[RMDB]
An RNA of 207 nucleotides, treated with DMS and 2A3 and read out base by base. It was measured as part of the RMDB library OK3TST.
RNA sequence: GGGAACGACUCGAGUAGAGUCGAAAACUGAAAAAUCUUUUCUGUGGAUUAUGUCACGGCCUUUAUCGUUAAACCGGUGCGUGAUUCGCUUUGGGGCACGGAUAAGGCCAGUAAACGCCAUGAAUGCUUUUGCGCUGUGGCAAUUCAUAAGGUUAUCUCAUCUACUUCAUUUCGAUGAAGUAGAUGAAAAAGAAACAACAACAACAAC
Reactivity to DMS in 0.01 (KOAc 150mM, MgCl2 10mM, bicine 150mM(pH8.5), 24C), signal-to-noise 2, nucleotides 027 to 156: c090u010g010a030a080a060a110a060u010c030u020u000u000u000c030u000g030u010g010g000a060u000u020a060u020g010u010c010a080c040g040g000c040c020u010u000u010a050u010c020g020u000u000a010a170a120c030c010g000g020u000g020c050g080u000g000a180u000u020c030g010c040u000u000u030g020g010g020g030c170a030c040g000g010a060u010a030a060g020g020c000c000a120g020u010a020a060a070c090g050c020c040a130u000g010a090a110u000g010c060u000u000u000u010g020c030g060c050u000g020u020g000g030c020a020a040u000u000c020a040u000a040a090g000g010u000u000a080u000c070
Reactivity to 2A3 in 0.01 (KOAc 150mM, MgCl2 10mM, bicine 150mM(pH8.5), 24C), signal-to-noise 5, nucleotides 027 to 156: c030u020g100a070a020a010a070a090u070c050u100u100u060u030c070u090g040u030g040g000a040u040u040a070u300g080u080c040a020c110g000g000c000c000u080u140u090a090u060c010g010u010u090a100a020a010c000c010g010g020u030g020c010g030u160g160a180u130u100c010g010c020u050u060u090g000g010g000g010c050a000c000g010g000a030u020a040a000g000g000c020c000a000g000u000a010a040a010c070g000c000c010a070u090g120a140a070u300g050c030u180u190u110u170g000c020g010c040u060g000u000g000g000c000a010a020u020u000c010a010u030a110a020g040g010u080u100a100u060c040